RNA sequence: GGGAACGACUCGAGUAGAGUCGAAAAGAAGAAUGUUCAGGCCAGGGUUCCUGAUACGGAAACAGGCCCGUCUCCAGGAGGACACGGGUUCCGAACGUGGCGUAGCGAAGCCUGGGGUCUCGGCAACGCUCUUCGUCGCCAGUGCCGGCACCGUAGGAGAAGACUAUCAGUUCGCUGAUAGUCUUCUAAAAGAAACAACAACAACAAC
Reactivity to DMS in 0.01 (KOAc 150mM, MgCl2 10mM, bicine 150mM(pH8.5), 24C), signal-to-noise 1, nucleotides 027 to 156: g020a120a070g040a060a070u010g010u000u000c050a080g000g030c030c020a300g000g010g050u000u000c000c000u060g040a080u000a090c060g020g000a100a050a040c070a170g000g000c010c000c000g030u010c060u000c000c010a210g020g030a300g040g020a050c020a020c000g030g040g010u010u040c050c050g000a150a110c090g020u010g020g030c020g020u000a110g060c030g010a030a130g000c000c010u030g020g030g080g040u000c050u000c030g010g030c000a030a060c020g020c100u000c060u000u000c030g030u000c040g020c010c000a130g050u010g000c030c000g020g020c060a070c020c020g000u000a120g030g030
Reactivity to 2A3 in 0.01 (KOAc 150mM, MgCl2 10mM, bicine 150mM(pH8.5), 24C), signal-to-noise 2, nucleotides 027 to 156: g080a020a010g050a030a080u100g040u070u090c040a040g010g010c040c020a020g050g030g020u060u090c020c010u070g030a090u070a090c050g070g030a090a090a010c050a040g090g000c000c000c000g010u030c010u000c010c000a120g120g170a100g100g010a160c000a010c030g040g020g000u160u160c020c050g040a060a010c070g040u070g020g000c040g030u030a020g040c030g050a020a030g030c050c030u070g080g030g010g000u000c050u030c090g040g000c010a000a060c020g020c030u020c020u110u100c060g080u040c020g040c040c000a050g060u080g110c070c000g020g000c030a010c000c030g100u070a060g000g090